[RMDB]
RNA sequence: GGGAACGACUCGAGUAGAGUCGAAAAUGCUGUUAAAAUAAGGUCCGCCUGUCUAGGACUCGAUCUUGGUACUAACCCAUAACGAUCAAAGUCAAAUCGGGAGCCUAUUAAUGAGGCAAAUUCAAUGAAACAACAACUGGUACCAUAAAGAAGCGGCCUACCUUUACGCAUUCGUGCGUAAAGGUAGAAAAGAAACAACAACAACAAC
Reactivity to DMS in 0.01 (KOAc 150mM, MgCl2 10mM, bicine 150mM(pH8.5), 24C), signal-to-noise 1, nucleotides 027 to 156: u010g020c020u000g030u000u000a010a010a050a150u000a030a080g000g020u020c000c020g010c010c000u020g020u010c050u000a110g030g020a230c000u000c040g010a080u000c040u000u000g030g010u000a090c020u010a080a130c020c000c020a110u010a090a090c050g010a050u000c090a080a110a230g000u020c060a010a030a140u000c040g020g000g000a230g020c020c020u040a150u010u020a080a090u010g010a040g020g050c000a070a040a100u010u000c050a120a120u000g000a180a080a110c050a110a060c020a000a050c010u010g000g000u000a010c040c000a040u000a030a020a100g020a110a040g010c040g000g000c050
Reactivity to 2A3 in 0.01 (KOAc 150mM, MgCl2 10mM, bicine 150mM(pH8.5), 24C), signal-to-noise 4, nucleotides 027 to 156: u060g000c020u030g020u110u050a120a080a090a070u160a080a050g020g000u030c030c040g040c070c050u080g050u120c130u120a060g010g060a020c020u000c040g030a020u010c020u010u020g040g010u000a080c030u060a060a090c010c010c040a090u090a120a040c070g020a030u110c080a100a040a040g080u020c010a000a050a090u080c040g000g010g040a070g030c010c010u060a090u110u090a130a070u170g110a040g000g020c000a020a050a050u140u080c070a020a070u120g130a150a040a020c050a020a030c010a040a020c070u080g040g010u040a030c010c000a010u110a050a070a020g070a070a020g040c010g020g020c000
Chemical mapping of a 207-nucleotide RNA with DMS and 2A3.
The RNA was probed in 150 mM KOAc, 10 mM MgCl2 and 150 mM bicine (pH 8.5) at 24 C.
For 2A3 the reverse transcriptase was SuperScript II with manganese.
The data come from the RNA Mapping Database (RMDB), library OK3TST.